[RMDB]
RNA sequence: GGGAACGACUCGAGUAGAGUCGAAAACGGUCCCGGUACUGUAGGGGUAAUUCCCCACCUCACUCGGGAGAGUGCCAGUGUACGAACCACCGCCCGGCUACGACGAUUGCGAGUCGGAUGCCGACGAGACGUGUUCUCGUUUCGACGAGAACACGUCAAAAGAAACAACAACAACAAC
Reactivity to 2A3 in 0.01 (KOAc 150mM, MgCl2 10mM, bicine 150mM(pH8.5), 24C), signal-to-noise 3, nucleotides 027 to 126: c050g010g000u030c040c050c000g000g040u080a060c050u060g150u230a150g000g000g000g020u050a020a130u240u300c020c010c000c020a060c000c020u020c020a070c030u080c040g000g070g080a060g000a010g050u030g000c060c030a100g000u060g040u120a040c020g030a040a010c010c000a030c050c000g100c030c050c000g000g030c000u030a000c000g030a010c000g070a110u070u300g150c080g040a050g000u000c000g020g030a030u200g050c020c010g010a040c020g070a110
Reactivity to DMS in 0.01 (KOAc 150mM, MgCl2 10mM, bicine 150mM(pH8.5), 24C), signal-to-noise 2, nucleotides 027 to 126: c140g000g000u000c000c020c030g000g000u000a040c090u020g020u020a140g000g010g000g000u000a160a230u000u000c000c000c010c080a070c080c060u010c050a040c050u000c040g000g040g000a120g000a100g000u010g000c180c110a050g030u000g020u010a140c090g000a090a040c110c040a100c070c020g000c050c060c030g000g010c010u000a160c010g010a030c040g000a220u010u000g000c100g000a170g000u000c000g000g000a120u010g010c000c010g000a050c120g010a240

Annotation
The record gives the reactivity of an RNA of 177 nucleotides to 2A3 and DMS. The RNA was probed in 150 mM KOAc, 10 mM MgCl2 and 150 mM bicine (pH 8.5) at 24 C. It was measured as part of the RMDB library OK2TRN. The DMS profile rests on 1,204 reads. Values cover nucleotides 27 to 126. For 2A3 the reverse transcriptase was SuperScript II with manganese.